An RNA of 177 nucleotides, treated with DMS and read out base by base. Reactivities are given for positions 27 through 126. The data come from the RNA Mapping Database (RMDB), library OK2TST.
[RMDB]
RNA sequence: GGGAACGACUCGAGUAGAGUCGAAAAGGUGUGACCACUGGUAUGGGGGCAGUUAUCAAUACUGCCAAAGUGAAACCGGGCGACACAGUGGCUAUCUUCGGCUUGGGUGGUAUUGGUUUGUCUGCGGUAGUAAAGCACGGUUCGCCGUGCUUUACUAAAAAGAAACAACAACAACAAC
Reactivity to DMS in 0.01 (KOAc 150mM, MgCl2 10mM, bicine 150mM(pH8.5), 24C), signal-to-noise 2, nucleotides 027 to 126: g010g040u000g020u010g000a060c050c030a030c040u010g020g010u010a090u020g000g020g020g010g010c020a010g010u000u000a300u020c100a060a040u010a050c010u000g020c010c020a020a030a080g000u000g000a040a080a160c060c060g020g010g000c040g040a100c030a040c100a110g040u000g000g030c090u000a070u020c040u010u000c110g000g020c020u000u000g000g000g030u000g010g000u000a050u000u000g010g000u010u000u000g020u020c030u010g000c060g000g010